RNA sequence: GGGAACGACUCGAGUAGAGUCGAAAAACUAGUAUGUACACGAUGAGACUGCCGUGUCGUCUAGACUGCGGAUCCAAGAAUCUCAGAUCUGCGAGAUAUUGUCUCAAGAGUACGAGACAAGUACUCAGUGUUUUGACUACUUCGGUGGUCGAAACACAAAAGAAACAACAACAACAAC
Reactivity to DMS in 0.01 (KOAc 150mM, MgCl2 10mM, bicine 150mM(pH8.5), 24C), signal-to-noise 9, nucleotides 027 to 126: a140c010u000a010g010u050a020u010g010u040a010c010a030c020g010a140u010g010a120g010a080c090u020g010c080c000g010u000g000u000c010g000u010c030u010a010g000a180c090u010g000c040g010g000a010u000c020c120a110a100g010a110a100u020c090u010c090a120g000a020u000c010u000g000c020g000a060g010a100u020a080u010u010g000u000c000u000c000a080a010g000a070g020u020a030c070g010a090g010a080c170a040a070g000u010a050c010u000c010a140
Reactivity to 2A3 in 0.01 (KOAc 150mM, MgCl2 10mM, bicine 150mM(pH8.5), 24C), signal-to-noise 9, nucleotides 027 to 126: a000c010u020a010g060u120a050u060g090u090a010c020a000c020g050a060u140g030a030g080a080c070u090g100c070c000g000u010g010u010c010g000u000c010u010a020g030a110c030u040g000c010g010g000a000u000c020c020a090a060g050a090a100u050c050u020c080a010g000a060u000c000u010g010c020g040a020g010a020u180a040u060u080g010u000c000u000c010a020a020g080a020g080u070a030c050g010a010g020a060c050a050a020g020u020a020c010u000c030a010

An RNA of 177 nucleotides, treated with DMS and 2A3 and read out base by base.
It was measured as part of the RMDB library OK1LIB.
The RNA was probed in 150 mM KOAc, 10 mM MgCl2 and 150 mM bicine (pH 8.5) at 24 C.